[RMDB]
RNA sequence: GGGAACGACUCGAGUAGAGUCGAAAAUACGUGACCUUCGGGUCACGUAACCGGCGUUCCCAAGUCAAAAAGUGAGACGCAAUCUCGACAGCGGCCUUUUCGUAUGAGUUGCUUUCGAGCAACUCAACAGGAAAACUUAAUUCGUUAAGUUUUCCUGAAAAGAAACAACAACAACAAC
Reactivity to 2A3 in 0.01 (KOAc 150mM, MgCl2 10mM, bicine 150mM(pH8.5), 24C), signal-to-noise 4, nucleotides 027 to 126: u030a000c010g000u000g000a000c000c000u030u020c270g060g000g000u000c000a000c000g000u000a010a010c010c010g060g010c010g000u010u010c010c010c000a010a010g150u120c060a040a010a060a060a070g130u130g050a080g010a040c020g000c060a030a090u030c030u030c080g080a080c020a040g010c000g020g030c000c000u070u090u120u150c070g040u140a090u170g000a000g010u010u000g000c000u080u040u100c190g070a000g000c000a000a000c010u000c000a000a000
Reactivity to DMS in 0.01 (KOAc 150mM, MgCl2 10mM, bicine 150mM(pH8.5), 24C), signal-to-noise 5, nucleotides 027 to 126: u000a010c000g010u000g000a020c000c000u000u010c220g040g010g020u000c000a000c000g010u000a010a080c060c040g010g020c030g010u000u010c010c000c000a170a120g010u020c110a040a050a050a100a060g010u000g000a070g000a080c040g000c120a090a180u000c020u000c040g010a060c070a080g010c050g000g000c040c030u000u010u000u000c060g000u010a110u000g010a010g000u000u000g000c000u000u000u010c160g010a010g020c000a010a010c000u000c000a020a110
Annotation
The record gives the reactivity of an RNA of 177 nucleotides to 2A3 and DMS. Reactivities are given for positions 27 through 126. The RNA was probed in 150 mM KOAc, 10 mM MgCl2 and 150 mM bicine (pH 8.5) at 24 C.